[RMDB]
RNA sequence: GGGAACGACUCGAGUAGAGUCGAAAAUCAGACAUCCAAGUAUUCACGGCUGGUAUACCUUCAAACGCUCCUAUCAUUCUUUCACCUGAGCAGAGUGAAAUCAUUCCGACUUCUAACAUAACAGUUACUUGGUCGAGUAUCAAUCAACGACGAUACGACUGGUGAAGUCAUUCGUGACUUCACCAGUAAAAGAAACAACAACAACAAC
Reactivity to 2A3 in 0.01 (KOAc 150mM, MgCl2 10mM, bicine 150mM(pH8.5), 24C), signal-to-noise 3, nucleotides 027 to 156: u110c010a020g030a060c000a040u030c020c020a070a020g060u020a090u070u090c080a010c120g030g040c020u040g000g010u060a050u050a080c040c000u130u090c030a160a150a080c080g020c040u070c030c010u090a060u130c020a090u090u120c030u020u090u050c060a050c000c010u090g030a060g030c040a000g050a020g030u050g000a000a050a050u080c060a070u130u080c010c010g010a020c020u050u040c030u130a070a040c010a070u110a110a020c020a090g000u000u010a020c040u050u050g020g010u010c030g020a030g010u020a000u030c010a130a030u100c050a100a080c090g110a000c050g010a020u010a020c030g010
Reactivity to DMS in 0.01 (KOAc 150mM, MgCl2 10mM, bicine 150mM(pH8.5), 24C), signal-to-noise 1, nucleotides 027 to 156: u000c020a090g020a180c020a120u000c010c020a080a200g000u000a090u000u010c040a120c090g050g060c020u000g060g000u010a060u000a050c050c020u000u000c010a080a080a150c050g050c020u000c010c000u000a160u000c040a080u000u030c010u000u000u020c050a080c020c010u000g000a150g030c080a050g000a070g000u000g020a070a070a100u000c090a000u010u010c020c000g020a020c000u020u020c020u010a050a000c050a150u000a090a110c140a170g000u010u010a020c050u000u000g010g020u000c010g010a130g000u030a040u000c050a080a160u010c060a080a100c100g000a140c090g020a020u000a070c040g000
This 207-nucleotide RNA was probed chemically with 2A3 and DMS. Values are in units of 0.01, from 0 to 300, in steps of 10. For DMS the reverse transcriptase was MarathonRT. For DMS, 1,460 sequencing reads were counted. The RNA was probed in 150 mM KOAc, 10 mM MgCl2 and 150 mM bicine (pH 8.5) at 24 C. The data come from the RNA Mapping Database (RMDB), library OK3TST.